[RMDB]
RNA sequence: GGGAACGACUCGAGUAGAGUCGAAAAGUGGAUAGUUUCGACUAUCCACACAACUGAUGAUCUUACUGUGGAGGAUGAAGAAGAUGGCCAUCGGAUCCUCAAAUAGCACAGAGUUCGCUCUGUGCAAUUACCGAUGGUUAUUCGUAACCAUCGGUAAAAAAGAAACAACAACAACAAC
Reactivity to DMS in 0.01 (KOAc 150mM, MgCl2 10mM, bicine 150mM(pH8.5), 24C), signal-to-noise 4, nucleotides 027 to 126: g010u000g000g000a020u000a020g000u000u010u010c170g020a040c000u000a010u000c000c000a010c000a030c190a050a090c030u000g010a040u010g020a130u010c040u010u000a120c080u000g000u000g020g010a090g000g010a100u000g020a100a100g010a090a070g010a050u010g000g000c090c010a050u000c010g010g000a100u000c000c000u000c150a050a070a070u010a090g020c010a000c000a010g000a010g010u000u010c210g030c000u000c000u000g000u000g010c000a010a020
Reactivity to 2A3 in 0.01 (KOAc 150mM, MgCl2 10mM, bicine 150mM(pH8.5), 24C), signal-to-noise 3, nucleotides 027 to 126: g000u000g000g000a010u010a010g010u010u030u130c160g030a020c000u000a000u000c000c000a000c000a000c010a000a030c030u080g010a040u060g010a020u030c010u050u130a160c050u140g020u140g250g030a070g090g020a090u110g070a060a100g020a010a020g020a050u050g050g000c000c010a020u020c020g030g020a020u010c000c020u060c030a070a090a060u130a020g000c010a000c000a000g010a010g020u040u040c140g020c060u000c000u000g000u010g000c000a000a000
Structure probing data (DMS and 2A3) for a 177-nucleotide construct. For 2A3, 4,932 sequencing reads were counted. Conditions: 150 mM KOAc, 10 mM MgCl2 and 150 mM bicine (pH 8.5), 24 C.